RNA sequence: GGGAACGACUCGAGUAGAGUCGAAAAUCAUACUGGAUAGUAGAUAUUGGGUGUCACGGUCUCUACUAUCUAGUAUGAGCACUACAGGUAGACUAGACUGUGAUACCCAAUGUCUAUCUGUGGUGUAGUAUCUCGUAGUAUUCGUACUAUGAGAUACAAAAGAAACAACAACAACAAC
Reactivity to DMS in 0.01 (KOAc 150mM, MgCl2 10mM, bicine 150mM(pH8.5), 24C), signal-to-noise 9, nucleotides 027 to 126: u030c050a090u000a050c030u010g000g010a050u030a050g010u000a010g000a010u000a010u000u000g000g010g010u000g020u010c010a020c010g000g010u000c000u000c100u010a110c000u000a010u000c030u000a070g020u000a010u010g010a110g010c160a080c140u000a010c030a030g000g000u000a000g000a230c200u010a040g010a020c010u000g010u000g000a020u000a020c000c010c000a000a010u000g010u000c010u000a000u020c030u000g010u010g000g010u010g010u010a120
Reactivity to 2A3 in 0.01 (KOAc 150mM, MgCl2 10mM, bicine 150mM(pH8.5), 24C), signal-to-noise 9, nucleotides 027 to 126: u070c000a010u000a020c010u030g040g020a020u010a030g010u000a000g010a010u010a000u010u010g030g020g010u060g040u070c030a020c040g010g010u010c010u030c010u090a230c000u010a010u000c000u000a010g000u000a000u030g000a000g020c030a010c020u010a000c010a000g000g010u000a000g020a110c120u010a020g010a030c030u040g030u030g060a040u040a030c000c010c010a010a020u030g000u000c000u000a010u010c000u000g050u040g020g020u040g010u040a060